Structure probing data (DMS) for a 207-nucleotide construct. The data come from the RNA Mapping Database (RMDB), library RNAMAK. DMS adducts were read by reverse transcription with MarathonRT. Values are in units of 0.01, from 0 to 300, in steps of 10.

RNA sequence: GGGAACGACUCGAGUAGAGUCGAAAAUGAAGCCUUUCGAGGCUUCAAAAAAGAUAUGGACCCAUAUUGACUUUUGACGCUUGAUGAGUCGGAAACGACUCAGAGAGCGAUAAGUCAUAUGGGUCCUAAGUCAAAAAAGGGUCAUUCGUGACCCUAAACUAUAUUUAACUUUCGAGUUAAAUAUAGUAAAAGAAACAACAACAACAAC
Reactivity to DMS in 0.01 (KOAc 150mM, MgCl2 10mM, bicine 150mM(pH8.5), 24C), signal-to-noise 2, nucleotides 027 to 156: u010g010a000a030g020c020c010u010u010u030c170g020a000g020g020c000u000u000c010a000a020a090a140a100a140g020a110u000a300u000g010g000a030c030c010c000a020u000a030u020u020g040a020c000u010u000u000u030g010a220c090g030c020u000u020g010a300u000g020a040g000u020c020g010g010a090a050a280c000g000a000c000u020c000a030g010a300g010a020g040c040g000a020u000a000a000g010u010c030a020u000a020u010g010g010g040u000c000c000u000a000a050g000u000c000a000a050a100a110a070a100g000g030g000u000c030a080u000u000c230g050u000g010a060c000c000c000u000a000a120